Chemical mapping of a 177-nucleotide RNA with 2A3 and DMS. DMS adducts were read by reverse transcription with MarathonRT.

[RMDB]
RNA sequence: GGGAACGACUCGAGUAGAGUCGAAAAUGGAAUUGUCGACGAGAAUAUGCGCGGAUGGACUGCGAAGCUGGCUCCCGGCAUCCCAUGCGACGUUGAGCGGCGUCGUAUCACGCUCAGGGGUAGCAUCUCACCUUCGAUGGUUCGCCAUCGAAGGUGAAAAAGAAACAACAACAACAAC
Reactivity to 2A3 in 0.01 (KOAc 150mM, MgCl2 10mM, bicine 150mM(pH8.5), 24C), signal-to-noise 2, nucleotides 027 to 126: u060g030g030a010a060u140u080g040u060c020g000a120c030g000a020g020a100a090u150a080u290g090c070g000c020g060g060a100u080g070g050a050c000u040g040c020g050a060a000g020c040u060g040g030c010u060c000c020c000g010g000c010a070u070c000c000c000a000u040g000c020g000a010c090g030u060u010g100a070g080c010g050g020c000g010u000c020g000u010a040u090c070a060c060g020c000u010c030a050g060g000g000g000u030a040g030c020a060u030c030
Reactivity to DMS in 0.01 (KOAc 150mM, MgCl2 10mM, bicine 150mM(pH8.5), 24C), signal-to-noise 1, nucleotides 027 to 126: u000g010g020a110a100u000u000g030u000c010g000a070c070g000a060g020a110a110u000a110u000g000c020g070c050g030g000a120u010g010g010a090c050u010g000c040g000a080a140g030c080u010g010g000c050u010c020c030c050g000g000c040a070u000c010c020c010a050u010g000c000g000a070c020g000u000u000g000a070g000c080g010g000c030g000u010c050g010u000a040u010c140a040c060g020c010u000c070a120g010g000g000g000u010a060g020c120a140u010c060